RNA sequence: GGGAACGACUCGAGUAGAGUCGAAAAUUGCAGCUUCGAUUGGAAGAAAUGUUGCUGCGACUGUGGAAGGUGCGAGGCGGCACUUUCAAUCUACCUUGGGGAGAGACCAAGUUACGUAUGUGCAUGCAGCGCGCCUAAUAUUCGUAUUAGGCGCGCUAAAAGAAACAACAACAACAAC
Reactivity to 2A3 in 0.01 (KOAc 150mM, MgCl2 10mM, bicine 150mM(pH8.5), 24C), signal-to-noise 2, nucleotides 027 to 126: u110u070g000c000a020g010c020u010u090c040g300a270u030u100g050g070a000a100g050a100a210a030u140g010u010u030g000c000u000g000c040g000a000c030u010g020u090g260g050a030a020g000g000u000g010c010g000a070g010g240c090g010g000c000a020c000u000u070u050c010a020a030u000c010u040a070c020c000u070u040g070g000g030g000a100g030a030g060a060c000c000a030a000g080u080u010a040c070g040u110a150u200g080u000g040c080a040u010g040c030